The record gives the reactivity of an RNA of 177 nucleotides to DMS.
[RMDB]
RNA sequence: GGGAACGACUCGAGUAGAGUCGAAAAGAUAUGGAGCAUGAACUACUCGGAACUGGAGCGUUGAAAUAGUGUGCGUCGGAAACGACGCACACUAUGGAGCUCCUAAGUACGAGCAUGCUCCUAAGUCCAUAUAAGAGAGCUUCGGCUCUCUUAUAUGAAAAGAAACAACAACAACAAC
Reactivity to DMS in 0.01 (KOAc 150mM, MgCl2 10mM, bicine 150mM(pH8.5), 24C), signal-to-noise 3, nucleotides 027 to 126: g000a120u010a300u020g000g010a020g000c000a010u010g000a070a080c090u010a300c010u000c000g010g000a190a150c300u010g000g010a020g000c010g010u000u010g000a120a150a010u000a010g030u000g060u010g010c000g010u000c000g000g000a100a070a170c000g020a030c000g000c000a000c000a000c000u000a010u000g000g000a070g010c000u010c000c000u000a000a010g000u000a110c020g000a010g010c000a010u000g000c010u000c000c000u000a000a060g010u000c020
For DMS the reverse transcriptase was MarathonRT.